[RMDB]
RNA sequence: GGGAACGACUCGAGUAGAGUCGAAAAGAUAUGGACGUACGCGAGAGGGAGGUGCUUCGGAAACGAAGCACUACCCACCCUACCCACCUCGCGUACGUCCUAAGUCAAAGGGGGCUUCGGCCCCCAACUGCAAUCCUUAGUUCGCUAAGGAUUGCAGAAAAGAAACAACAACAACAAC
Reactivity to DMS in 0.01 (KOAc 150mM, MgCl2 10mM, bicine 150mM(pH8.5), 24C), signal-to-noise 1, nucleotides 027 to 126: g000a040u010a210u000g010g000a000c010g060u000a000c000g020c040g010a000g010a180g020g010g000a300g010g010u000g010c000u000u010c000g020g000a120a010a130c000g000a020a010g040c000a020c030u000a070c090c010c050a090c080c110c110u020a130c020c020c040a130c150c000u010c000g020c010g030u000a000c000g040u000c000c000u000a000a060g000u010c050a080a120a170g000g010g000g030g000c000u010u010c120g030g000c000c010c000c000c000a000a000